[RMDB]
RNA sequence: GGGAACGACUCGAGUAGAGUCGAAAACUCGCGCGAACAUAGAGGCGUGGAGCGCGACAUGAAUCAGCCUCUAUUAGAUUAAUGGUCGACAGAUCAGCGGCGAUCAGCGACCGAAUUAGAAGCCGCCACCGGAAGAGGAGACGCUCGACGGACGUCACGAUCAUCACGAUUUCGAUCGUGAUGAUCGAAAAGAAACAACAACAACAAC
Reactivity to 2A3 in 0.01 (KOAc 150mM, MgCl2 10mM, bicine 150mM(pH8.5), 24C), signal-to-noise 2, nucleotides 027 to 156: c030u000c000g000c020g010c000g030a300a010c050a030u020a030g000a000g080g020c140g070u090g110g000a030g020c010g000c020g030a020c050a120u300g040a100a050u060c060a140g000c000c010u040c000u040a070u030u070a000g010a070u080u230a040a120u180g010g010u000c010g000a050c030a060g000a040u000c020a020g000c000g120g000c010g000a000u030c000a000g020c020g000a010c030c000g000a010a010u080u030a030g060a140a000g020c000c010g000c040c000a060c040c040g120g010a040a040g000a020g050g040a110g010a080c040g030c040u000c020g030a030c010g010g020a030c050g010u040c010a010
Reactivity to DMS in 0.01 (KOAc 150mM, MgCl2 10mM, bicine 150mM(pH8.5), 24C), signal-to-noise 1, nucleotides 027 to 156: c060u030c030g010c050g000c050g020a070a110c030a060u000a120g000a140g000g010c050g010u040g080g010a120g000c000g010c000g000a020c140a020u000g030a110a060u020c020a200g000c010c040u000c010u000a080u000u010a140g000a160u000u000a070a090u010g000g040u000c000g030a100c120a180g000a200u000c060a100g010c120g060g050c000g000a070u000c090a080g040c080g050a070c040c020g020a000a090u000u020a120g000a020a210g020c000c000g000c000c060a150c010c020g010g000a110a110g000a230g040g000a160g010a060c060g010c060u000c000g000a060c020g040g000a080c040g000u000c000a270